[RMDB]
RNA sequence: GGGAACGACUCGAGUAGAGUCGAAAACUAGGGGGUAUUCCGGUGUUGGAUACUUAGUAAUAUGCAACGCUAAUUGCAUAAGAUUGUAGGACGGAAUUUACAGUCUUGGUUUUUCAAACCUGAAACUUGUGGUAGUACGCGUUCGCGCGUACUACAAGCUCUAGCAAAGUUUCGACUUUGCUAGAGCAAAAGAAACAACAACAACAAC
Reactivity to DMS in 0.01 (KOAc 150mM, MgCl2 10mM, bicine 150mM(pH8.5), 24C), signal-to-noise 2, nucleotides 027 to 156: c020u010a100g020g030g030g050g010u000a070u010u000c030c030g000g040u010g030u000u000g020g000a120u000a050c070u000u040a100g020u000a100a150u000a020u000g020c000a000a030c090g000c110u010a060a200u010u000g000c000a060u010a030a030g000a070u000u000g000u010a040g020g010a290c050g010g010a100a300u000u000u000a040c000a030g000u000c020u000u000g000g010u000u000u000u030u010c150a040a080a050c010c000u000g010a080a090a070c060u000u010g030u000g020g020u000a010g030u000a010c000g010c000g050u000u000c300g010c020g020c000g030u000a000c000u010a000c000a040a140
Reactivity to 2A3 in 0.01 (KOAc 150mM, MgCl2 10mM, bicine 150mM(pH8.5), 24C), signal-to-noise 3, nucleotides 027 to 156: c020u070a040g010g000g020g040g000u010a010u010u000c010c020g100g020u080g070u070u000g030g010a010u010a060c020u020u050a030g030u080a100a070u050a050u060g030c020a040a010c060g010c190u170a100a110u070u020g020c010a020u000a010a020g010a010u030u060g020u030a020g000g110a030c100g020g020a040a030u090u070u000a040c000a010g010u010c000u030u050g020g030u020u000u010u070u150c090a080a020a010c000c030u050g010a060a090a070c040u120u120g050u050g250g000u000a000g000u000a000c000g000c000g000u020u030c100g010c000g020c000g060u000a000c000u000a000c000a000a000